[RMDB]
RNA sequence: GGGAACGACUCGAGUAGAGUCGAAAAGCGAACAGAGUGAGAACAGAUUUCAUGGGCACACCUUCUUAUUUUGUUCUUGGGACGAAUGAAUAAUUCCAGUUGCUGCACCUGAAGUCGGGAGACCUCAUAGACAAAAACAAUUCGUUGUUUUUGUCUAAAAAGAAACAACAACAACAAC
Reactivity to DMS in 0.01 (KOAc 150mM, MgCl2 10mM, bicine 150mM(pH8.5), 24C), signal-to-noise 8, nucleotides 027 to 126: g020c070g010a060a060c070a090g010a110g010u000g000a050g010a090a090c080a090g000a070u000u000u010c050a030u010g010g000g000c040a050c040a040c060c030u000u010c080u000u000a040u010u000u010u000g010u000u000c010u000u010g020g000g010a190c210g010a030a030u000g000a050a030u010a050a060u010u010c090c070a040g010u000u000g010c120u000g000c030a060c030c040u000g010a030a040g010u000c020g010g020g010a170g010a080c090c010u000c050a140
Reactivity to 2A3 in 0.01 (KOAc 150mM, MgCl2 10mM, bicine 150mM(pH8.5), 24C), signal-to-noise 4, nucleotides 027 to 126: g060c030g010a050a010c030a060g070a010g070u100g010a040g030a090a030c020a040g030a050u050u050u070c040a080u190g020g000g030c020a010c010a010c020c000u060u030c010u040u110a110u060u110u070u130g020u000u020c030u050u090g130g050g040a030c040g040a020a040u060g010a030a020u030a070a020u150u000c040c010a020g020u050u050g050c110u010g000c010a110c090c000u010g030a020a010g020u040c020g020g020g020a070g010a020c000c010u010c030a030